About this RNA:
The record gives the reactivity of an RNA of 207 nucleotides to DMS and 2A3. DMS adducts were read by reverse transcription with MarathonRT. Conditions: 150 mM KOAc, 10 mM MgCl2 and 150 mM bicine (pH 8.5), 24 C. For 2A3, 1,045 sequencing reads were counted. 2A3 is a SHAPE reagent: it acylates the 2'-hydroxyl of flexible nucleotides of all four kinds. Source: RMDB library OK3TST, as collected in RNAgym.
[RMDB]
RNA sequence: GGGAACGACUCGAGUAGAGUCGAAAAUUAAGUUGCAGUCCCUGGAGACUUCUCCCAUUUCAGUGCAGCUACAAUAGGGCCUCUAUUUGGGCUCAGUUCAGUAUUCUAGCAGCAUUUCUAAAGAAAGGCUUUCUAAAUGCUGGAUCCUUCUCACUGAACCCCUAUUUAUGUUCGCAUAAAUAGGGGUAAAAGAAACAACAACAACAAC
Reactivity to DMS in 0.01 (KOAc 150mM, MgCl2 10mM, bicine 150mM(pH8.5), 24C), signal-to-noise 1, nucleotides 027 to 156: u000u020a060a130g020u000u000g010c040a140g000u020c000c000c000u010g000g040a290g000a050c040u000u010c030u000c020c030c050a240u010u000u000c040a000g040u010g000c020a030g020c110u000a120c050a010a100u000a150g020g020g020c000c000u000c250u000a120u000u010u000g040g020g000c000u000c020a020g060u020u010c030a070g020u000a020u000u000c070u000a030g040c300a040g020c000a040u000u010u000c020u010a130a080a300g010a030a010a020g010g020c020u000u000u000c020u000a020a020a020u000g020c000u000g020g010a040u000c040c020u000u000c030u000c010a030c060u000g000a030
Reactivity to 2A3 in 0.01 (KOAc 150mM, MgCl2 10mM, bicine 150mM(pH8.5), 24C), signal-to-noise 3, nucleotides 027 to 156: u130u040a080a000g090u050u060g070c020a010g070u010c000c020c040u070g080g070a140g000a120c020u120u050c020u080c040c020c030a100u050u050u020c030a030g020u000g050c050a010g000c050u070a060c080a030a160u100a130g000g020g080c020c000u120c060u230a300u140u280u300g010g000g020c020u000c010a000g010u020u000c000a000g000u010a040u050u010c080u040a040g030c010a000g000c010a010u000u000u070c060u250a300a110a080g010a040a030a010g050g000c010u080u090u010c000u040a040a000a010u010g000c010u000g010g000a020u000c030c010u060u040c020u000c010a040c060u080g050a060